[RMDB]
RNA sequence: GGGAACGACUCGAGUAGAGUCGAAAAGGGGUCAGUUAAGACAGCGACGAUGGGAGGCAUCGAUCUGUACUGAAGCCUCCACGGUACAGGGAGCCUCCCGCGUCGCAAUGACGACUGACGGAGGCACCCAAAAGAGCAUUACUUCGGUAAUGCUCAACCCUUAUAAAAAGUUCGCUUUUUAUAAGGGAAAAGAAACAACAACAACAAC
Reactivity to DMS in 0.01 (KOAc 150mM, MgCl2 10mM, bicine 150mM(pH8.5), 24C), signal-to-noise 1, nucleotides 027 to 156: g010g070g030g050u000c030a030g010u000u030a040a180g020a210c000a050g010c020g040a000c000g000a150u010g010g030g010a070g030g070c010a260u000c110g040a060u020c010u010g060u040a030c010u010g010a040a090g030c010c010u000c000c000a030c000g000g020u000a020c010a030g000g000g010a040g010c000c000u000c000c000c010g010c100g000u000c000g000c000a030a030u000g000a090c010g000a040c020u000g010a060c010g000g040a010g090g000c000a120c020c000c020a040a070a150a160g010a020g020c000a020u000u000a000c000u020u020c230g050g000u010a010a010u000g010c000u000c010a060a080
Reactivity to 2A3 in 0.01 (KOAc 150mM, MgCl2 10mM, bicine 150mM(pH8.5), 24C), signal-to-noise 3, nucleotides 027 to 156: g030g020g100g030u000c000a000g010u040u050a150a080g080a180c110a070g020c000g000a020c020g190a300u180g010g000g010a010g000g000c010a020u300c120g000a000u000c010u010g000u000a020c000u030g030a100a010g010c000c000u010c000c000a000c000g000g000u000a000c010a010g000g000g000a000g050c000c050u040c000c000c010g000c000g000u000c010g000c000a010a030u070g020a010c030g000a010c000u000g000a010c020g000g000a000g000g000c000a040c000c000c000a010a080a020a070g010a000g000c000a000u010u010a000c010u030u050c230g080g020u000a000a000u000g000c000u000c000a000a000

This 207-nucleotide RNA was probed chemically with DMS and 2A3. Source: RMDB library RNAMAK, as collected in RNAgym. 2A3 adducts were read by reverse transcription with SuperScript II with manganese. DMS adducts were read by reverse transcription with MarathonRT. The RNA was probed in 150 mM KOAc, 10 mM MgCl2 and 150 mM bicine (pH 8.5) at 24 C.